[RMDB]
RNA sequence: GGGAACGACUCGAGUAGAGUCGAAAAAUGCGGAUUUUCAGCUGCUGGACACGCACAUGCUCAGCCAGGUAAGUCUCCCGGGUGAAGUAGGUGCGCAUGUGCUCCGCAAAGCCCCUGUCCAGGAGCGAGGGGAGCACGACGCCCCCCGAAGGCAGACCGUAUGCUUUAAAUUCGUUUAAAGCAUACGAAAAGAAACAACAACAACAAC
Reactivity to 2A3 in 0.01 (KOAc 150mM, MgCl2 10mM, bicine 150mM(pH8.5), 24C), signal-to-noise 3, nucleotides 027 to 156: a000u150g000c060g010g040a070u150u040u040u190c080a050g010c010u110g030c000u010g040g000a020c010a030c080g060c000a030c010a030u130g000c000u020c020a030g090c080c020a040g020g020u170a150a070g110u060c030u060c040c010c030g020g000g030u080g030a120a050g010u080a050g100g130u060g010c030g000c020a040u110g020u020g040c010u000c000c010g060c070a080a000a070g050c010c000c000c030u030g070u080c080c070a020g000g040a000g000c030g000a080g000g020g000g000a040g000c010a020c040g180a040c090g030c000c000c000c020c000c000g030a020a020g070g000c020a000g020a020c010
Reactivity to DMS in 0.01 (KOAc 150mM, MgCl2 10mM, bicine 150mM(pH8.5), 24C), signal-to-noise 1, nucleotides 027 to 156: a130u000g000c040g010g000a170u060u020u080u000c060a100g000c000u000g010c000u000g030g030a100c150a040c060g000c030a080c010a050u000g010c020u010c060a300g020c000c020a060g010g030u010a090a140g020u010c130u010c060c010c030g010g140g010u010g000a070a120g000u000a050g000g040u010g010c070g000c030a010u000g020u000g010c010u020c010c020g000c030a040a080a260g000c030c010c000c040u000g000u010c070c100a160g010g000a050g040c010g000a150g000g000g090g000a030g050c000a060c050g000a120c120g030c000c000c010c020c020c000g030a030a150g010g000c050a090g000a100c120